[RMDB]
RNA sequence: GGGAACGACUCGAGUAGAGUCGAAAAGUGACGACCAGUGCUUGGGCCCUCCAGUGCGUUGACUGCUCUUUGAAUCAAGUGCCAGAUGCCAGUCAGUAGAGUCAUUUCCUGGACAACACUCUGGACACGCUUAUUAGUGGUUCGCCACUAAUAAGCGAAAAGAAACAACAACAACAAC
Reactivity to 2A3 in 0.01 (KOAc 150mM, MgCl2 10mM, bicine 150mM(pH8.5), 24C), signal-to-noise 2, nucleotides 027 to 126: g010u040g030a020c010g030a060c020c040a060g010u030g040c010u070u090g060g000g000c050c000c020u030c010c000a030g010u040g020c000g060u050u050g020a040c000u020g040c020u020c000u100u140u110g080a060a060u050c080a190a030g020u070g160c010c010a020g010a040u070g040c050c000a030g000u060c010a000g010u060a050g000a020g020u010c020a000u050u040u000c010c010u010g010g010a000c010a050a010c030a030c040u040c020u040g020g000a040c030a010
Reactivity to DMS in 0.01 (KOAc 150mM, MgCl2 10mM, bicine 150mM(pH8.5), 24C), signal-to-noise 4, nucleotides 027 to 126: g010u010g000a080c050g010a120c090c050a100g000u000g000c040u000u000g030g010g000c060c060c060u010c050c040a020g010u000g020c050g010u010u010g010a060c040u010g020c060u000c050u000u010u030g030a120a090u010c110a080a070g020u010g010c000c040a040g000a070u010g010c050c030a070g000u000c030a060g000u000a080g010a150g000u010c090a050u000u000u010c010c010u000g000g000a040c040a050a050c050a040c130u010c020u000g010g000a120c200a120
Description: The record gives the reactivity of an RNA of 177 nucleotides to 2A3 and DMS. Reactivities are given for positions 27 through 126. The RNA was probed in 150 mM KOAc, 10 mM MgCl2 and 150 mM bicine (pH 8.5) at 24 C. For 2A3 the reverse transcriptase was SuperScript II with manganese. DMS (dimethyl sulfate) methylates the pairing face of unpaired adenines and cytosines.